This 207-nucleotide RNA was probed chemically with 2A3. The reactions ran in a buffer of 150 mM KOAc, 10 mM MgCl2 and 150 mM bicine (pH 8.5), at 24 C. The data come from the RNA Mapping Database (RMDB), library RSTRND. As a SHAPE reagent, 2A3 marks flexible, mostly unpaired nucleotides at the ribose 2'-OH.
RNA sequence: GGGAACGACUCGAGUAGAGUCGAAAAAAGGUGAUGUUGCGUGUCGAGGUGCCGUUGGCCUCGUAAACAAACGGCAAAGCCAUUUAACUGGCAACCAGAACUACGCUCUCGCUGCUUAAGUGAGAUGACGACCGUGCAGCCCGGCCUUUGGCGUCGCGCACUCAGAGUAGUUCGCUACUCUGAGUGCAAAAGAAACAACAACAACAAC
Reactivity to 2A3 in 0.01 (KOAc 150mM, MgCl2 10mM, bicine 150mM(pH8.5), 24C), signal-to-noise 1, nucleotides 027 to 156: a010a010g030g020u040g010a060u040g010u150u030g000c020g020u060g080u090c010g010a030g070g020u110g030c050c000g050u010u110g020g000c040c000u050c020g060u070a030a030a000c010a050a030a000c060g010g010c030a020a070a000g000c000c010a030u120u120u290a160a060c110u060g000g000c030a010a050c030c000a020g050a090a060c030u070a010c120g050c030u010c000u000c050g000c000u030g020c080u140u150a080a000g020u020g050a020g000a010u050g030a040c020g000a030c050c030g020u050g000c010a010g050c000c020c000g080g010c060c000u040u080u090g010g020c040g010u170c040g040c010